[RMDB]
RNA sequence: GGGAACGACUCGAGUAGAGUCGAAAAGAUAUGGAUAUGGCGCAACGAUAAGCCUCCCUCGGAAACGAGGGAAGGCUUUUGACGUUGUGACCAUAUCCUAAGUCAAACACCAUCUUCGGAUGGUGAACCGGUAUCACUGGUUCGCCAGUGAUACCGGAAAAGAAACAACAACAACAAC
Reactivity to DMS in 0.01 (KOAc 150mM, MgCl2 10mM, bicine 150mM(pH8.5), 24C), signal-to-noise 1, nucleotides 027 to 126: g010a000u000a300u010g000g000a000u000a000u010g000g000c000g020c000a020a000c000g040a160u010a000a010g000c000c000u010c000c000c000u010c000g000g000a200a100a110c040g010a010g030g020g040a000a010g000g000c000u000u000u050u000g010a260c160g000u000u000g000u000g000a080c010c000a000u000a000u000c000c000u000a000a070g030u000c010a150a210a230c020a020c000c000a000u000c000u000u010c180g040g000a050u000g010g010u010g000a050a130